[RMDB]
RNA sequence: GGGAACGACUCGAGUAGAGUCGAAAAGGCUUAUCCCGGGGGGUAGCGCUCCGUGCCCUUCCAUAGCACUGGGGUCCCGGGCCCCCUCCCAGGAAUGGGAAUGGGGGGAGAUCGACCGGGUCCCGCACAAGGACCGUGUUCGCACGGUCCAAAAGAAACAACAACAACAAC
Reactivity to DMS in 0.01 (KOAc 150mM, MgCl2 10mM, bicine 150mM(pH8.5), 24C), signal-to-noise 4, nucleotides 027 to 129: g070g020c000u020u080a030u030c020c070c030g090g000g060g000g040g070u040a070g040c100g010c050u030c060c060g020u070g010c020c060c030u000u050c040c070a060u060a000g020c100a040c190u000g050g000g060g000u040c020c000c090g020g010g040c040c000c010c000c010u040c000c020c000a050g010g070a100a090u050g010g010g030a200a090u050g040g020g020g010g020g030a070g040a030u050c160g050a100c020c030g010g020g100u010c040c000c090g050c120a040c140a120a090
Reactivity to 2A3 in 0.01 (KOAc 150mM, MgCl2 10mM, bicine 150mM(pH8.5), 24C), signal-to-noise 4, nucleotides 027 to 129: g090g020c080u080u070a060u080c000c000c000g000g000g000g010g000g000u110a140g250c030g000c030u060c030c070g010u010g000c000c000c000u090u030c000c020a130u070a040g000c050a020c150u080g010g000g010g010u150c000c000c000g030g010g020c000c000c000c000c020u030c000c000c010a020g040g140a120a040u030g020g010g000a030a070u110g050g000g020g010g060g000a050g050a080u180c050g030a000c000c000g000g010g050u020c000c010c000g000c000a080c010a020a050